Notes: Source: RMDB library OK1LIB, as collected in RNAgym. The record gives the reactivity of an RNA of 177 nucleotides to DMS and 2A3.
RNA sequence: GGGAACGACUCGAGUAGAGUCGAAAAGAUGCCACAUAGUCGCUUAAAGGCAUCCCUCACGAACCUGAGGUGGUACGGAUUUCAGGUGGAGUAUUCGUAUACGGGGUCGUAGAUUAUGGAGAGGAGGCCCAUGGCUCACUUUCGAGUGAGCCAUGGGAAAAGAAACAACAACAACAAC
Reactivity to DMS in 0.01 (KOAc 150mM, MgCl2 10mM, bicine 150mM(pH8.5), 24C), signal-to-noise 1, nucleotides 027 to 126: g030a000u020g010c030c000a140c220a090u000a060g040u020c080g000c120u030u040a030a070a090g000g000c010a070u000c120c000c000u000c010a060c140g000a050a030c000c010u000g010a020g020g000u020g000g000u060a040c060g020g000a060u000u000u040c000a080g000g060u010g070g040a100g030u080a110u050u000c110g000u000a080u000a050c090g000g000g010g000u000c010g000u030a130g040a030u000u000a050u000g000g000a150g000a040g010g000a090g020g020
Reactivity to 2A3 in 0.01 (KOAc 150mM, MgCl2 10mM, bicine 150mM(pH8.5), 24C), signal-to-noise 3, nucleotides 027 to 126: g020a010u150g070c040c000a090c010a080u230a040g060u130c050g040c170u210u270a180a110a000g000g020c000a000u000c040c000c000u000c000a030c020g010a060a070c000c020u100g020a060g000g110u080g000g020u080a000c040g000g070a040u060u050u150c030a060g000g180u180g020g050a120g040u080a020u000u030c020g000u070a000u060a050c010g000g000g030g000u020c060g020u010a100g000a160u080u090a010u120g060g020a100g000a000g160g000a000g050g050